[RMDB]
RNA sequence: GGGAACGACUCGAGUAGAGUCGAAAACGCGCAGCAGCGGCAGCUCGCACAGCUCGUGGGGGAUGACCCGGAUCUCGGCGCCGGUGUUGGUGAAGGUGACCCUGCCGUCGCCGAUGACGUAGCUCAGAGGUAAGGACGUUUUCGAACGUCCUUACCUAAAAGAAACAACAACAACAAC
Reactivity to 2A3 in 0.01 (KOAc 150mM, MgCl2 10mM, bicine 150mM(pH8.5), 24C), signal-to-noise 1, nucleotides 027 to 126: c040g040c000g030c040a070g000c000a000g030c020g070g010c020a000g020c000u050c010g070c000a070c000a020g070c020u060c050g030u050g000g070g000g000g000a030u100g060a070c000c000c000g060g050a150u010c000u000c000g000g000c000g000c000c000g000g000u070g080u000u220g050g000u070g020a170a050g130g030u140g130a080c010c010c000u010g000c000c040g000u000c000g070c010c000g000a000u060g000a000c010g060u060a070g050c000u060c080a000g000
Reactivity to DMS in 0.01 (KOAc 150mM, MgCl2 10mM, bicine 150mM(pH8.5), 24C), signal-to-noise 1, nucleotides 027 to 126: c090g020c040g010c100a060g000c000a140g010c030g010g020c090a090g020c000u000c020g080c100a090c100a120g020c040u000c000g000u010g000g000g000g000g000a070u040g000a030c040c020c000g000g000a120u010c040u000c000g020g010c030g000c000c050g060g040u000g040u050u030g000g050u000g000a100a130g000g030u070g020a060c210c070c120u000g080c000c000g030u000c030g000c000c010g010a000u030g000a010c210g050u020a050g030c050u000c070a090g000